[RMDB]
RNA sequence: GGGAACGACUCGAGUAGAGUCGAAAAGAUAUGGAAUUUAGGGAGUCUCCUCCCUAUGAUAGGAGCACAUCGGAAACGAUGUGACCCUCCGUCAUAGGGAGGAGACGAAGAACUAAAUUCCUAAGUCGAGUUAACUUUAGUUCGCUAAAGUUAACUCAAAAGAAACAACAACAACAAC
Reactivity to DMS in 0.01 (KOAc 150mM, MgCl2 10mM, bicine 150mM(pH8.5), 24C), signal-to-noise 3, nucleotides 027 to 126: g010a110u010a300u010g000g010a030a000u000u000u000a010g020g010g000a110g010u000c000u000c000c000u000c000c000c000u000a000u000g000a020u000a080g050g000a060g010c020a010c000a000u000c010g000g000a160a120a260c020g000a020u000g000u000g000a090c200c170c010u010c030c000g000u000c010a010u000a010g020g000g020a010g030g010a000g010a000c000g010a040a080g020a120a160c010u000a020a010a030u000u010c000c000u000a050a100g000u000c110
Reactivity to 2A3 in 0.01 (KOAc 150mM, MgCl2 10mM, bicine 150mM(pH8.5), 24C), signal-to-noise 1, nucleotides 027 to 126: g060a050u150a060u180g000g030a000a000u030u020u010a030g000g010g030a040g020u000c000u000c020c000u000c000c000c000u000a010u030g030a000u060a300g040g040a000g000c000a010c000a010u000c000g060g100a090a130a060c010g000a000u020g000u020g000a000c050c000c010u040c010c000g030u000c010a000u000a000g020g000g000a000g000g000a020g020a000c010g000a010a010g000a010a000c000u000a010a000a000u010u020c000c000u010a180a000g160u110c100
The record gives the reactivity of an RNA of 177 nucleotides to DMS and 2A3. 2A3 adducts were read by reverse transcription with SuperScript II with manganese. The DMS profile rests on 3,344 reads.